[RMDB]
RNA sequence: GGGAACGACUCGAGUAGAGUCGAAAAUCAUGUUUAUUCGUAAACAUGAAACGCCGCACGGCGCGCGUGGCCACCAGGGAACGUGGAUAUGGAAGCCUGAGAAUGAGGUGCCGUUCGCGGCACCUAAUUCAACCAUUUCAUUCGUGAAAUGGUUGAAAAAAGAAACAACAACAACAAC
Reactivity to DMS in 0.01 (KOAc 150mM, MgCl2 10mM, bicine 150mM(pH8.5), 24C), signal-to-noise 3, nucleotides 027 to 126: u000c000a000u010g010u000u000u000a020u000u000c170g000u000a010a010a010c000a000u000g000a010a120a110c090g010c010c020g010c100a100c120g010g010c020g010c100g010c030g020u000g010g010c020c030a080c070c040a090g020g000g000a080a080c110g000u000g000g000a100u000a080u000g000g020a090a140g000c010c020u000g010a100g010a090a100u000g020a020g010g000u000g010c000c000g020u000u010c180g030c000g000g020c010a010c010c000u010a030a060
Reactivity to 2A3 in 0.01 (KOAc 150mM, MgCl2 10mM, bicine 150mM(pH8.5), 24C), signal-to-noise 2, nucleotides 027 to 126: u030c000a000u010g010u000u010u020a070u030u040c140g030u040a010a030a000c000a000u000g000a060a050a000c060g050c030c010g100c030a090c060g050g020c030g030c040g020c010g070u040g040g040c020c020a060c030c040a070g020g050g050a070a030c040g030u040g020g040a060u060a030u120g090g040a110a030g000c000c000u060g020a060g050a070a120u210g020a030g000g010u000g010c020c000g000u030u050c230g000c010g070g000c000a000c000c000u000a000a020